The data come from the RNA Mapping Database (RMDB), library OK2TRN. This 177-nucleotide RNA was probed chemically with DMS and 2A3. The 2A3 profile rests on 1,715 reads. As a SHAPE reagent, 2A3 marks flexible, mostly unpaired nucleotides at the ribose 2'-OH. The reactions ran in a buffer of 150 mM KOAc, 10 mM MgCl2 and 150 mM bicine (pH 8.5), at 24 C. For DMS the reverse transcriptase was MarathonRT. The DMS profile rests on 6,120 reads.

RNA sequence: GGGAACGACUCGAGUAGAGUCGAAAAAGAAGGAGUUGGAGACAUGGCUGAGACGGCAACAUCUCCAUAAAGUUCUUGGCUAGUUCUGAAGGGCUUGCUAUUCUUCAGGUACUUCUUUGGAAGAAUAUACUAAGGCUACAUUCGUGUAGCCUUAGUAAAAAGAAACAACAACAACAAC
Reactivity to DMS in 0.01 (KOAc 150mM, MgCl2 10mM, bicine 150mM(pH8.5), 24C), signal-to-noise 5, nucleotides 027 to 126: a040g000a040a010g010g020a110g010u000u000g000g000a020g000a020c300a090u000g020g020c020u000g010a060g020a080c090g010g000c160a080a080c050a160u000c010u000c010c180a070u010a060a060a060g010u000u000c010u000u000g000g010c040u010a070g000u010u000c020u000g000a050a030g010g000g010c040u010u000g000c040u000a030u000u000c020u000u000c010a030g010g010u000a060c020u000u000c010u000u000u000g010g000a100a090g000a050a070u010a110
Reactivity to 2A3 in 0.01 (KOAc 150mM, MgCl2 10mM, bicine 150mM(pH8.5), 24C), signal-to-noise 2, nucleotides 027 to 126: a000g050a030a020g030g010a090g090u040u010g020g010a010g000a010c070a100u040g040g000c020u030g040a010g020a080c010g030g000c010a070a020c010a060u020c010u020c020c020a030u160a040a060a010g020u020u030c030u060u020g000g000c020u050a050g060u190u020c010u100g100a080a060g020g010g000c040u010u060g000c010u040a030u040u020c000u010u020c010a010g030g030u030a040c020u020u040c000u000u070u110g060g000a100a020g000a220a030u190a000